[RMDB]
The record gives the reactivity of an RNA of 207 nucleotides to 2A3 and DMS. Source: RMDB library OK3TST, as collected in RNAgym. 2A3 adducts were read by reverse transcription with SuperScript II with manganese. Conditions: 150 mM KOAc, 10 mM MgCl2 and 150 mM bicine (pH 8.5), 24 C. The 2A3 profile rests on 1,658 reads.

RNA sequence: GGGAACGACUCGAGUAGAGUCGAAAAGGCCAUCGUUUUUUCCAGACCAUUUUCGAUGGCCAUAGGUCUGGCUUAUAGUUCAAUCGCCGAGAGGCGUACAGUUAGAGUAGCGAGCUCGAAGCACGCGACCGCUAAGAGCUCGCGAAGGUCGCGGAGAAUUAUUUAGGUAGUUCGCUACCUAAAUAAUAAAAGAAACAACAACAACAAC
Reactivity to 2A3 in 0.01 (KOAc 150mM, MgCl2 10mM, bicine 150mM(pH8.5), 24C), signal-to-noise 2, nucleotides 027 to 156: g000g000c010c010a010u010c030g010u020u030u060u040u120u090c040c020a040g050a040c030c030a110u020u040u050u160c020g000a000u010g000g020c000c000a010u040a000g010g000u010c000u010g030g060c010u130u110a130u080a130g070u080u100c040a050a060u060c030g000c010c010g040a040g010a030g040g000c000g030u020a030c010a060g020u100u120a020g000a030g080u080a000g000c000g000a000g000c000u000c010g010a030a030g020c030a010c090g190c090g120a150c050c050g000c000u000a040a000g000a000g000c010u000c010g010c000g000a000a000g000g000u010c030g010c090g030g050a060g070a060
Reactivity to DMS in 0.01 (KOAc 150mM, MgCl2 10mM, bicine 150mM(pH8.5), 24C), signal-to-noise 3, nucleotides 027 to 156: g010g000c030c000a030u010c040g010u010u000u020u010u000u000c030c020a180g000a070c060c050a150u010u000u000u000c070g000a030u010g030g000c000c000a000u000a010g000g010u010c050u000g010g000c110u000u010a120u010a130g010u000u010c070a130a150u000c010g020c010c010g000a280g010a300g040g020c010g080u000a050c070a130g030u010u000a070g010a120g020u000a260g000c020g010a030g030c000u000c010g000a260a100g020c010a100c060g010c090g030a060c090c030g040c030u000a040a300g000a070g030c020u000c010g000c010g010a030a060g030g000u000c020g040c030g000g000a240g010a110